[RMDB]
RNA sequence: GGGAACGACUCGAGUAGAGUCGAAAAGAUAUGGAUGAAUCAAGACUGCUUGGAUUUACAGUCGGAAACGACUGUUGUCAGCAGGCUUGAGUUCAUCCUAAGUCAAACUACAUCUUCGGAUGUAGAAGUUGUAUUCAAAGUUCGCUUUGAAUACAACAAAAGAAACAACAACAACAAC
Reactivity to DMS in 0.01 (KOAc 150mM, MgCl2 10mM, bicine 150mM(pH8.5), 24C), signal-to-noise 7, nucleotides 027 to 126: g000a050u000a300u000g000g010a010u000g000a030a050u000c000a020a000g000a030c000u000g010c010u000u010g030g010a010u000u010u000a010c000a000g020u000c000g010g010a120a130a200c000g010a020c000u000g000u000u000g010u000c000a030g000c000a000g000g000c000u000u000g000a030g020u000u000c010a000u000c000c000u010a010a100g000u000c030a150a140a300c010u000a000c000a000u000c000u000u020c280g020g000a010u000g010u000a010g010a080a110
Reactivity to 2A3 in 0.01 (KOAc 150mM, MgCl2 10mM, bicine 150mM(pH8.5), 24C), signal-to-noise 8, nucleotides 027 to 126: g030a020u080a040u220g000g000a010u010g000a000a020u030c010a010a010g010a030c000u000g070c030u220u300g230g030a130u300u300u240a020c010a000g000u000c000g010g010a070a080a010c010g010a000c000u000g010u030u000g010u010c010a000g000c000a000g000g010c000u000u010g010a020g000u010u000c000a010u000c000c000u010a060a010g020u000c040a030a100a100c000u010a000c000a010u000c010u050u080c300g170g000a010u000g000u000a000g000a040a030